Overview: Chemical mapping of a 177-nucleotide RNA with 2A3 and DMS. The DMS profile rests on 882 reads.
[RMDB]
RNA sequence: GGGAACGACUCGAGUAGAGUCGAAAACAUGUGUACUUCGGUACACAUGAAAUGACCGCCAUUAUUGCCUAAGGCUACACGGACGGCCGGGUCAAAUGCCGAAAAUCGUUGCGUUCGCGCAACGAAAGAGUCGGUAUUUGUUCGCAAAUACCGACUCAAAAGAAACAACAACAACAAC
Reactivity to 2A3 in 0.01 (KOAc 150mM, MgCl2 10mM, bicine 150mM(pH8.5), 24C), signal-to-noise 2, nucleotides 027 to 126: c000a010u010g000u000g000u000a010c000u020u050c210g090g000u000a000c000a000c000a000u010g000a000a010a040u060g020a000c000c020g100c080c010a250u190u120a120u150u270g010c000c000u080a130a050g030g000c030u010a040c070a000c090g060g010a010c010g000g000c020c000g020g010g010u010c000a020a010a040u050g010c020c030g000a060a000a000a000u020c000g000u000u020g020c010g020u050u040c300g030c000g000c080a000a000c010g010a040a020a000
Reactivity to DMS in 0.01 (KOAc 150mM, MgCl2 10mM, bicine 150mM(pH8.5), 24C), signal-to-noise 1, nucleotides 027 to 126: c000a000u000g010u000g010u000a000c000u010u020c220g010g000u000a000c010a010c000a000u000g000a070a090a170u020g010a050c050c020g030c070c060a120u010u010a100u000u000g020c010c020u020a140a090g000g020c000u000a050c170a070c060g000g000a070c020g000g000c070c000g000g000g000u000c040a050a070a050u000g020c000c010g000a050a060a140a050u010c000g000u000u000g000c000g000u000u020c240g000c020g000c000a020a010c000g000a010a010a120